[RMDB]
RNA sequence: GGGAACGACUCGAGUAGAGUCGAAAAUUGUUAACUUUUCUCCAUUGAUAUUCAGCAGAUAUUUGAGUACCUAAUUUUGUGCAAUGUCCUAUACUGGAUGAUGGAUUAUAACAAGAUUAUAGGAAAUACAUGUAGUUCUUCAAUGCUUUGGUAUAUAUCGUAUCCUUAGGUUCGCCUAAGGAUACGAAAAAGAAACAACAACAACAAC
Reactivity to 2A3 in 0.01 (KOAc 150mM, MgCl2 10mM, bicine 150mM(pH8.5), 24C), signal-to-noise 3, nucleotides 027 to 156: u050u040g060u060u040a110a090c020u080u030u060u010c030u000c010c010a040u040u030g010a020u090a060u160u120c040a020g000c040a040g100a110u070a140u140u150u090g040a040g020u050a020c010c000u040a040a060u030u040u030u020g020u000g000c030a060a040u020g020u000c000c000u120a100u030a200c090u140g110g050a080u060g050a030u100g050g010a040u050u090a030u080a060a020c010a010a020g020a030u040u060a050u110a160g030g000a040a110a030u170a030c050a030u120g070u090a040g040u060u020c030u030u020c020a020a080u060g000c010u020u080u050g060g030u050a050u030a030u110a020
Reactivity to DMS in 0.01 (KOAc 150mM, MgCl2 10mM, bicine 150mM(pH8.5), 24C), signal-to-noise 1, nucleotides 027 to 156: u010u010g000u010u020a140a100c070u000u000u000u020c020u000c020c020a090u010u020g000a090u000a080u000u010c050a090g070c040a130g030a080u000a030u010u000u000g030a130g010u010a140c070c040u030a010a090u000u000u000u030g060u020g010c080a050a060u000g020u000c010c040u010a160u020a300c110u000g000g000a070u000g020a060u000g070g010a100u000u000a060u000a080a090c030a040a080g020a210u000u000a070u020a000g030g010a050a050a030u000a050c050a040u000g030u000a060g020u000u010c090u000u000c010a060a080u010g020c010u000u000u000g010g040u000a050u010a180u010a150